[RMDB]
Chemical mapping of a 177-nucleotide RNA with DMS and 2A3. For DMS, 2,145 sequencing reads were counted. The reactions ran in a buffer of 150 mM KOAc, 10 mM MgCl2 and 150 mM bicine (pH 8.5), at 24 C. The data come from the RNA Mapping Database (RMDB), library OK2TRN.
RNA sequence: GGGAACGACUCGAGUAGAGUCGAAAAGUGCAGGAUGGGAGCACACAACUAGCCGAUUUGGAAAACGCUAUGGCUUAGCGAAAGGGUAUUUACGGCAAAAGUAAAAAUUCCGAUUACCUUGUAUGAACGAAGUACGAGGAUUCGUCCUCGUACUUCGAAAAGAAACAACAACAACAAC
Reactivity to DMS in 0.01 (KOAc 150mM, MgCl2 10mM, bicine 150mM(pH8.5), 24C), signal-to-noise 3, nucleotides 027 to 126: g020u000g010c010a030g000g000a110u020g020g000g000a100g010c080a030c070a080c140a080a050c090u010a110g020c010c020g000a180u000u000u010g010g000a140a130a070a180c100g020c030u010a030u000g010g020c140u020u000a050g000c020g010a070a090a070g000g000g000u000a030u000u020u000a110c040g020g010c180a040a060a100a060g000u000a020a040a070a070a080u000u010c030c030g000a090u000u000a040c030c020u000u000g010u000a110u020g020a080a210
Reactivity to 2A3 in 0.01 (KOAc 150mM, MgCl2 10mM, bicine 150mM(pH8.5), 24C), signal-to-noise 2, nucleotides 027 to 126: g000u040g000c030a010g000g120a110u150g070g030g010a030g040c020a000c020a010c010a060a120c060u070a020g060c010c020g100a150u060u050u100g080g040a000a120a040a050c020g020c020u030a010u140g170g020c010u040u040a010g000c010g020a130a010a000g100g000g000u040a020u090u140u090a100c000g000g010c000a140a020a000a000g140u240a000a240a040a030a030u060u000c000c000g020a050u010u010a060c020c020u040u150g130u100a180u170g000a100a030